[RMDB]
RNA sequence: GGGAACGACUCGAGUAGAGUCGAAAAGCAUUAUAGCGCCGCGCGUAUAAUGCAUCGCGCGAUUAAUCGUAGCAUCGUAAUGCCGGCAUCGGCCGAUUAUAGCCGGCCGCGGCGCAUUACGUAAUGCAGGUAACUGGGAGUUCGCUCCCAGUUACCUAAAAGAAACAACAACAACAAC
Reactivity to 2A3 in 0.01 (KOAc 150mM, MgCl2 10mM, bicine 150mM(pH8.5), 24C), signal-to-noise 1, nucleotides 027 to 126: g000c020a000u020u020a050u170a110g020c000g000c110c050g120c000g000c020g040u100a090u020a200a110u160g090c030a020u090c020g000c020g030c020g080a050u070u300a120a100u150c090g090u110a040g000c000a020u080c000g020u010a050a000u040g000c040c010g090g020c020a090u100c000g040g040c030c000g000a010u140u100a150u300a150g060c030c000g010g000c000c000g000c000g070g040c000g050c000a000u010u030a010c010g000u020a020a040u040g000c010
Reactivity to DMS in 0.01 (KOAc 150mM, MgCl2 10mM, bicine 150mM(pH8.5), 24C), signal-to-noise 1, nucleotides 027 to 126: g010c000a000u000u000a030u000a170g000c010g010c100c120g000c100g010c050g010u000a030u010a030a040u000g020c090a100u000c080g030c000g000c030g020a080u000u020a080a100u000c020g000u020a180g030c030a030u000c020g020u000a000a000u000g000c010c160g040g020c070a040u010c010g000g010c000c000g000a100u010u000a110u020a250g000c070c010g020g000c010c030g010c080g010g030c060g030c000a020u010u010a000c020g020u010a060a020u000g030c020